[RMDB]
RNA sequence: GGGAACGACUCGAGUAGAGUCGAAAAAAACUGCUUUCUAUUCCUAGCUUCUUAAAGAUAUCCUCUUUCAAUCAGGAUAAGAUAUUUAAAUUACUCAUAUGCUUAAUUGUGGAGAGUGGAGUGGGAAUGUAGAUGCAUUUAAGAGGUGAUCAUAUAAUAAAUGAUGGUAGUUCGCUACCAUCAUUUAAAAAGAAACAACAACAACAAC
Reactivity to DMS in 0.01 (KOAc 150mM, MgCl2 10mM, bicine 150mM(pH8.5), 24C), signal-to-noise 2, nucleotides 027 to 156: a050a060a060c050u000g010c020u000u000u000c040u000a160u000u000c030c000u000a250g030c040u000u000c050u000u000a070a110a100g010a160u000a040u010c020c000u010c050u000u000u010c100a180a140u000c100a100g030g000a030u000a050a120g000a100u000a040u000u000u000a060a040a120u000u000a070c030u000c010a100u010a130u000g020c000u000u000a060a100u000u000g030u000g000g000a100g010a040g060u010g000g010a110g050u000g020g000g020a030a000u000g040u000a050g020a080u000g000c070a060u000u000u000a060a090g000a090g030g030u000g000a090u030c020a070u010a080u000a090a120
Reactivity to 2A3 in 0.01 (KOAc 150mM, MgCl2 10mM, bicine 150mM(pH8.5), 24C), signal-to-noise 3, nucleotides 027 to 156: a000a000a000c050u050g020c030u040u060u050c050u080a070u020u040c010c000u010a080g010c020u080u050c030u110u220a130a120a020g050a030u010a050u040c020c020u010c010u080u050u070c020a140a220u100c050a040g110g000a010u030a010a010g010a010u040a090u120u070u130a090a140a080u110u170a030c010u040c080a060u110a050u260g010c000u130u160a130a040u280u080g040u050g090g010a050g020a010g010u030g010g010a000g030u010g000g020g000a030a030u070g010u010a030g010a060u060g000c000a020u050u080u080a060a060g020a040g090g070u080g080a060u130c020a030u100a070u140a250a040
This 207-nucleotide RNA was probed chemically with DMS and 2A3. DMS adducts were read by reverse transcription with MarathonRT. It was measured as part of the RMDB library OK3TST.